[RMDB]
RNA sequence: GGGAACGACUCGAGUAGAGUCGAAAAGGCUUGGUAAACACCAGUUACCAUAAUGUGAAUACAACUGAACCAAGAACUUAAAUCGCCAUUUCCCAAUAGUGGAAUUUGGCUGGACUGGUGUAUUAAGACUAAUGAUUGGCUUCGGCCAAUCAUUAGUAAAAGAAACAACAACAACAAC
Reactivity to 2A3 in 0.01 (KOAc 150mM, MgCl2 10mM, bicine 150mM(pH8.5), 24C), signal-to-noise 2, nucleotides 027 to 126: g020g000c050u030u020g000g030u060a200a220a050c020a020c010c000a020g000u010u110a080c010c040a020u140a050a160u150g040u030g120a210a150u120a110c050a060a050c050u070g040a020a010c000c000a000a000g000a060a080c060u080u190a060a090a170u070c030g000c000c010a030u020u000u010c000c000c020a110a300u240a100g090u180g020g000a030a030u040u020u020g010g000c050u020g000g000a010c010u000g040g000u050g020u010a040u040u180a040a050g080
Reactivity to DMS in 0.01 (KOAc 150mM, MgCl2 10mM, bicine 150mM(pH8.5), 24C), signal-to-noise 2, nucleotides 027 to 126: g030g000c010u010u010g030g010u020a080a100a040c030a010c040c010a030g020u000u010a120c040c010a080u000a050a040u010g030u000g020a210a150u000a060c090a070a070c080u010g000a060a040c000c010a040a030g010a070a060c090u000u000a070a070a080u010c160g030c010c000a000u000u000u000c000c010c000a190a190u000a120g020u020g010g000a010a020u010u000u000g000g000c010u000g000g000a050c020u010g000g010u000g000u000a070u030u030a040a130g010